[RMDB]
An RNA of 177 nucleotides, treated with DMS and read out base by base. Source: RMDB library M2PK90, as collected in RNAgym.
RNA sequence: GGGAACGACUCGAGUAGAGUCGAAAAAUAAACCACCACCAGCGCGACCUGGUCCACCACGAGCUGGUCGGCGGCCUCGCGCGCUCCCGCCACCACGGCGACCACCUCCUCGCGCAGGUACAAAAAACAACUGCAUACAGUUCGCUGUAUGCAGUUGAAAAGAAACAACAACAACAAC
Reactivity to DMS in 0.01 (KOAc 150mM, MgCl2 10mM, bicine 150mM(pH8.5), 24C), signal-to-noise 1, nucleotides 027 to 126: a070u010a060a140a150c080c040a190c080c080a100c040c020a050g000c000g040c020g000a020c090c060u000g000g010u000c020c080a060c100c050a170c190g020a120g000c060u000g000g000u000c070g010g030c050g000g000c030c090u010c080g000c070g010c000g000c020u000c070c020c030g030c020c010a000c020c010a030c090g020g030c300g000a060c040c070a020c040c030u010c030c130u010c030g030c000g020c020a060g000g010u050a100c070a000a030a020a030a050a050